[RMDB]
RNA sequence: GGGAACGACUCGAGUAGAGUCGAAAAGAUAUGGACGUGAUCUUCUAGUGUGGCGUUGAAAUCGGAAACGAUGGAGCCACAUCAGAAACCCACGUCCUAAGUCAAAACAUACCCUUCGGGGUAUGAAUCAUCCCCUAUUCUUCGGAAUAGGGGAUGAAAAAGAAACAACAACAACAAC
Reactivity to DMS in 0.01 (KOAc 150mM, MgCl2 10mM, bicine 150mM(pH8.5), 24C), signal-to-noise 2, nucleotides 027 to 126: g010a040u000a300u000g010g020a000c000g000u020g010a140u000c070u000u000c000u000a040g010u000g040u000g030g010c000g000u000u010g000a060a100a020u000c000g010g010a120a140a200c020g000a020u000g010g020a160g000c000c000a000c000a000u010c030a010g000a000a000a070c130c160c000a000c030g000u000c000c010u000a000a060g000u000c060a090a050a090a220c010a000u000a000c000c000c000u000u020c230g020g020g010g020u000a010u000g000a060a130
Reactivity to 2A3 in 0.01 (KOAc 150mM, MgCl2 10mM, bicine 150mM(pH8.5), 24C), signal-to-noise 1, nucleotides 027 to 126: g030a020u070a000u110g000g000a000c000g000u000g020a080u050c050u050u000c020u070a090g020u000g010u020g020g000c020g220u300u070g020a050a020a000u000c010g010g010a060a000a060c030g000a030u020g000g020a000g000c010c000a010c000a020u020c000a010g020a000a010a000c050c040c010a000c010g030u010c000c000u010a070a010g010u020c010a000a060a090a160c010a000u010a000c020c000c050u010u040c290g080g030g000g010u010a000u000g010a010a080

This 177-nucleotide RNA was probed chemically with DMS and 2A3. The DMS profile rests on 1,366 reads. It was measured as part of the RMDB library TTRDEL.